[RMDB]
RNA sequence: GGGAACGACUCGAGUAGAGUCGAAAAGUAGCAGCACAAGAAUUUUGUUUUGAAGGUGCACAGUUUAGCCAAUGUAAUGGUGUGUCUUUAAAUAACACAGUGGAUGUUAUUAGAUUCAACCUUAAUUUCACUGCAGAUGUACAAUCUGGUAUGGGUGGUCUACCACUCGUUUCGACGAGUGGUAGACAAAAGAAACAACAACAACAAC
Reactivity to 2A3 in 0.01 (KOAc 150mM, MgCl2 10mM, bicine 150mM(pH8.5), 24C), signal-to-noise 1, nucleotides 027 to 156: g040u080a030g000c020a010g020c020a010c020a150a000g070a180a090u090u180u080u010g060u110u050u100u070g040a050a000g070g020u050g020c020a000c000a020g020u090u000u070a020g060c020c070a030a050u080g020u110a010a090u050g000g000u020g000u020g010u030c000u040u110u010a050a030a030u070a070a080c030a000c020a010g020u060g090g000a070u000g000u010u000a030u070u050a040g030a070u040u030c020a030a030c000c000u020u100a030a030u150u060u060c100a080c020u060g000c000a000g020a000u020g090u070a030c020a240a010u050c040u000g030g030u050a100u070g050g000g040u050g000